[RMDB]
An RNA of 207 nucleotides, treated with 2A3 and DMS and read out base by base. For DMS, 2,232 sequencing reads were counted.
RNA sequence: GGGAACGACUCGAGUAGAGUCGAAAAGGCCGCGGUGCUCUGGAGUAGAGGCUUCUUGCUUCGAAACACCAUCGAUCGUCCCUUCUUCUUUACCUCCUUCUGGCUCUUCCGAUGAGACGCGACCGGUGGCAUCACCUCUCGGUUCGUCUUCCAACCUUCAUAUAUUAUGGUUCGCCAUAAUAUAUGAAAAAGAAACAACAACAACAAC
Reactivity to 2A3 in 0.01 (KOAc 150mM, MgCl2 10mM, bicine 150mM(pH8.5), 24C), signal-to-noise 6, nucleotides 027 to 156: g020g010c020c000g000c010g020g010u000g000c000u000c000u030g000g010a020g010u030a030g000a010g010g000c010u230u120c160u250u300g000c030u050u010c010g020a020a010a000c030a070c080c010a010u020c000g010a260u030c010g040u030c010c010c000u050u020c020u060u020c000u030u110u090a120c020c030u050c020c030u090u110c050u080g040g000c020u010c000u110u040c020c020g100a170u150g030a030g010a010c010g010c090g050a010c010c000g010g000u010g020g000c050a110u110c040a080c020c000u020c030u070c010g020g000u020u020c010g000u000c000u050u020c030c010a050a050c000c020u000
Reactivity to DMS in 0.01 (KOAc 150mM, MgCl2 10mM, bicine 150mM(pH8.5), 24C), signal-to-noise 1, nucleotides 027 to 156: g000g040c050c040g000c100g060g070u010g000c050u000c020u010g060g040a120g100u010a180g000a050g050g010c060u000u000c130u000u010g040c020u060u020c000g040a300a140a180c000a030c110c030a100u000c030g020a160u030c020g010u000c010c040c020u000u000c010u000u000c030u010u010u010a080c050c010u020c080c020u010u000c000u010g000g050c060u010c040u010u000c040c040g040a170u000g010a100g010a070c050g040c000g000a010c040c000g010g040u000g010g000c070a200u000c200a120c030c010u000c020u010c020g010g010u000u000c010g000u000c040u020u040c060c000a110a150c080c040u000
The 2A3 profile rests on 8,734 reads.
The reactions ran in a buffer of 150 mM KOAc, 10 mM MgCl2 and 150 mM bicine (pH 8.5), at 24 C.
For 2A3 the reverse transcriptase was SuperScript II with manganese.